[RMDB]
RNA sequence: GGGAACGACUCGAGUAGAGUCGAAAAGAAGAGAGUCGACGCAAGCGACGAUAACUGCGGAACGGUAACCGUAGUACCGUAGGGUCAUGGCACGCGAAAGCGAAAGACCGAAUCAUGCCAUAAGAGACCAGGGUGAUUACUUCGGUAAUCACCCUGGAAAAGAAACAACAACAACAAC
Reactivity to 2A3 in 0.01 (KOAc 150mM, MgCl2 10mM, bicine 150mM(pH8.5), 24C), signal-to-noise 1, nucleotides 027 to 126: g100a050a000g080a000g040a000g120u040c000g000a060c050g000c200a030a080g000c020g020a030c010g050a140u020a090a040c000u000g060c000g010g030a100a000c030g040g000u010a070a000c020c020g020u030a000g050u000a000c000c000g020u020a040g000g140g000u020c000a060u160g000g000c010a000c000g020c050g040a080a000a000g070c000g070a020a100a070g000a040c000c040g020a000a020u180c010a070u040g040c000c000a030u070a100a000g150a000g040a000
Reactivity to DMS in 0.01 (KOAc 150mM, MgCl2 10mM, bicine 150mM(pH8.5), 24C), signal-to-noise 2, nucleotides 027 to 126: g020a080a110g000a130g000a200g000u010c060g000a220c030g050c140a060a170g020c000g020a040c000g000a080u000a050a200c050u000g070c000g050g010a070a000c110g000g060u000a080a210c000c070g000u010a040g080u000a010c080c020g010u010a070g060g020g000u000c030a040u010g000g000c050a200c080g020c020g080a090a020a290g000c000g000a120a090a110g000a080c000c080g000a100a050u040c050a130u000g050c000c080a000u000a050a030g010a110g000a180
The record gives the reactivity of an RNA of 177 nucleotides to 2A3 and DMS. For DMS, 1,210 sequencing reads were counted. DMS adducts were read by reverse transcription with MarathonRT. For 2A3, 788 sequencing reads were counted. High 2A3 reactivity points to a flexible backbone, as in loops and unpaired stretches. The reactions ran in a buffer of 150 mM KOAc, 10 mM MgCl2 and 150 mM bicine (pH 8.5), at 24 C. It was measured as part of the RMDB library OK1LIB.